[RMDB]
RNA sequence: GGGAACGACUCGAGUAGAGUCGAAAACCGGGGAAACCUACUCUAUCGAGGCGGAGAUCGAGCGCCAGUUCGUGCGCGGCGACCUGAAAUUGCUUCGGCUUCUUCUUGUUCGCGUCCUGCGUGGAACGGCUCCUUCUUCACACCAGCCGGAGAUGGAUCGAAUGGAAAUGUUCGCAUUUCCAUUCGAAAAAGAAACAACAACAACAAC
Reactivity to 2A3 in 0.01 (KOAc 150mM, MgCl2 10mM, bicine 150mM(pH8.5), 24C), signal-to-noise 2, nucleotides 027 to 156: c010c000g000g000g010g050a080a110a110c010c010u050a080c050u020c010u000a060u020c010g040a050g020g030c030g000g010a010g000a010u000c000g000a000g020c070g070c140c040a040g000u000u020c060g040u080g040c010g010c010g000g020c000g000a000c000c000u000g000a000a040a030u060u030g000c010u010u040c240g090g020c000u010u000c020u000u000c000u020u040g110u230u030c000g000c000g050u150c020c060u060g000c000g000u030g030g020a000a000c000g000g010c000u000c000c000u010u000c000u020u030c020a050c020a040c010c030a030g020c000c020g040g100a030g010a020u060g010g000a050